[RMDB]
RNA sequence: GGGAACGACUCGAGUAGAGUCGAAAAAGCUCUGUAACCGUCGGGGGCUAAUCAGGCUUAGCGGGGAGGACGUGGACCAGCGAGGGUGACGCGCUGCGUUGACGUGGUGCUCUGCUUGGCUGUGUGUCGGUGUGACCCGCACCCCUGCAGAGGGGUGGACUAAUAGUAGGUUCGCCUACUAUUAGUCAAAAGAAACAACAACAACAAC
Reactivity to DMS in 0.01 (KOAc 150mM, MgCl2 10mM, bicine 150mM(pH8.5), 24C), signal-to-noise 1, nucleotides 027 to 156: a120g000c000u000c050u000g040u020a100a050c020c030g020u000c060g000g010g030g000g000c070u000a080a110u010c000a110g000g000c010u000u000a050g060c030g020g020g040g010a110g010g010a060c040g030u000g010g000a020c010c010a060g010c010g020a070g000g010g020u010g000a250c030g010c000g030c020u000g000c140g040u000u000g000a030c020g030u000g020g040u010g000c010u010c020u010g030c010u000u010g000g010c000u000g010u000g040u010g040u000c010g020g020u000g000u010g000a240c030c000c020g000c020a030c000c000c000c010u000g010c230a100g000a040g000g000g020g000u000g000
Reactivity to 2A3 in 0.01 (KOAc 150mM, MgCl2 10mM, bicine 150mM(pH8.5), 24C), signal-to-noise 3, nucleotides 027 to 156: a000g050c040u010c000u050g090u110a090a070c060c010g080u050c050g040g020g000g000g000c020u050a040a090u120c040a020g050g000c000u040u040a000g010c010g010g000g020g020a050g070g040a010c010g000u020g040g010a010c000c010a010g010c010g010a060g050g090g040u160g080a020c050g020c000g010c050u000g050c110g040u020u050g130a030c010g000u040g020g150u160g030c000u020c000u020g000c000u020u030g000g010c040u020g030u010g020u010g040u090c030g010g030u060g030u060g080a090c000c000c000g000c000a000c000c010c000c010u050g030c070a040g010a020g140g010g010g000u020g030